An RNA of 177 nucleotides, treated with DMS and 2A3 and read out base by base. The 2A3 profile rests on 10,984 reads. Source: RMDB library TTRDES, as collected in RNAgym. For 2A3 the reverse transcriptase was SuperScript II with manganese. The reactions ran in a buffer of 150 mM KOAc, 10 mM MgCl2 and 150 mM bicine (pH 8.5), at 24 C.
RNA sequence: GGGAACGACUCGAGUAGAGUCGAAAAGAUAUGGAAUCCAGUACGAGCGUGUGAUCGGAAACGAUCAUAACGCGAUGAGUACGGAUUCCUAAGUCAAAACUAGUUAUUGGUUCGCCAAUAACUAGAAGUUACGUUAGUUCUUCGGAACUAACGUAACAAAAGAAACAACAACAACAAC
Reactivity to DMS in 0.01 (KOAc 150mM, MgCl2 10mM, bicine 150mM(pH8.5), 24C), signal-to-noise 3, nucleotides 027 to 126: g010a020u000a000u010g000g000a030a010u000c000c000a110g020u000a000c000g000a020g030c000g060u000g010u000g010a000u000c000g000g000a010a000a010c010g010a010u000c000a000u000a040a010c000g030c000g010a110u020g000a190g000u000a000c010g000g000a010u000u000c000c000u000a000a090g000u000c010a110a100a150a300c000u000a010g000u020u010a020u000u000g010g010u000u020c300g040c020c000a000a000u000a010a000c000u000a010g010a060a120
Reactivity to 2A3 in 0.01 (KOAc 150mM, MgCl2 10mM, bicine 150mM(pH8.5), 24C), signal-to-noise 2, nucleotides 027 to 126: g000a010u000a010u070g000g000a000a000u000c000c040a070g020u000a010c010g020a030g130c000g020u010g000u000g010a010u000c000g000g000a010a010a000c020g010a010u020c040a030u090a300a090c000g000c020g010a160u110g020a000g000u000a000c000g000g000a000u010u030c000c000u010a010a000g000u000c000a040a010a030a110c010u010a000g020u000u000a000u010u010g030g070u040u080c290g070c090c000a000a000u010a000a000c000u010a000g010a030a020